[RMDB]
An RNA of 177 nucleotides, treated with DMS and 2A3 and read out base by base. The RNA was probed in 150 mM KOAc, 10 mM MgCl2 and 150 mM bicine (pH 8.5) at 24 C. For 2A3 the reverse transcriptase was SuperScript II with manganese.
RNA sequence: GGGAACGACUCGAGUAGAGUCGAAAAGUUUAGAUGUAAACAGCUUGGAUCUUGGACUCCCCUAGCUUGGUGAAUAGCCAAUACUUUUACAUGACAAAUUAGUGAUAUUUGAUUAGCUCAAGGCUCACUAGUCUUAUUUGUUCGCAAAUAAGACUAGAAAAGAAACAACAACAACAAC
Reactivity to DMS in 0.01 (KOAc 150mM, MgCl2 10mM, bicine 150mM(pH8.5), 24C), signal-to-noise 9, nucleotides 027 to 126: g020u000u000u000a080g010a110u000g010u000a030a050a070c100a110g010c110u000u000g000g010a090u000c030u010u010g010g000a110c060u000c030c010c030c050u000a060g010c210u000u000g000g010u000g000a120a060u010a150g010c020c010a020a050u010a090c060u000u000u000u000a050c070a060u000g010a110c080a030a050a070u010u000a070g010u000g000a070u000a060u000u000u000g000a100u010u000a080g020c090u000c050a040a060g010g010c060u000c080a130
Reactivity to 2A3 in 0.01 (KOAc 150mM, MgCl2 10mM, bicine 150mM(pH8.5), 24C), signal-to-noise 5, nucleotides 027 to 126: g020u040u110u120a080g010a090u070g030u180a060a090a030c020a040g060c010u040u070g050g030a050u030c020u030u110g060g040a050c020u020c010c010c010c010u020a040g030c020u030u010g010g010u050g040a110a050u120a100g000c000c000a030a020u040a040c020u070u080u040u040a060c030a060u050g080a050c010a060a130a070u100u050a070g050u030g080a060u030a090u130u050u050g080a100u030u050a030g000c010u010c070a040a010g050g010c020u010c020a020